Chemical mapping of a 177-nucleotide RNA with DMS and 2A3. For DMS the reverse transcriptase was MarathonRT. High 2A3 reactivity points to a flexible backbone, as in loops and unpaired stretches. It was measured as part of the RMDB library OK2TST.
RNA sequence: GGGAACGACUCGAGUAGAGUCGAAAACGAUUACAACAUCGGGCACGUCGUGAAGGGCGAACAGGACGACGUCGGCCUCAAGGUUCACGUGAAGAUCGACCUCGAAUCGCCCAAGGGCGCAACGGUCAAUCCAUGCAAUCUUCGGAUUGCAUGGAUUAAAAGAAACAACAACAACAAC
Reactivity to DMS in 0.01 (KOAc 150mM, MgCl2 10mM, bicine 150mM(pH8.5), 24C), signal-to-noise 3, nucleotides 027 to 126: c060g010a080u010u010a150c230a070a050c150a070u010c050g010g020g010c180a130c010g010u000c020g000u010g000a150a190g000g000g010c000g000a030a110c120a100g000g060a110c040g000a050c100g000u010c120g000g020c020c000u010c090a070a090g000g030u010u010c180a100c080g020u000g010a030a080g000a070u000c020g010a020c050c050u000c110g010a080a070u010c020g030c000c010c000a040a090g010g020g020c050g010c080a020a070c050g020g000u000c100
Reactivity to 2A3 in 0.01 (KOAc 150mM, MgCl2 10mM, bicine 150mM(pH8.5), 24C), signal-to-noise 3, nucleotides 027 to 126: c000g010a050u140u170a080c070a150a010c010a060u070c030g020g040g020c030a000c060g030u040c020g030u070g140a170a090g020g010g000c020g000a070a000c010a070g000g040a010c000g010a010c000g030u080c090g010g030c000c000u090c060a050a100g050g000u070u200c070a030c110g050u090g060a030a000g030a090u070c010g040a080c010c010u030c030g060a170a110u030c000g010c000c000c000a030a030g120g020g020c070g000c070a050a040c040g010g020u040c060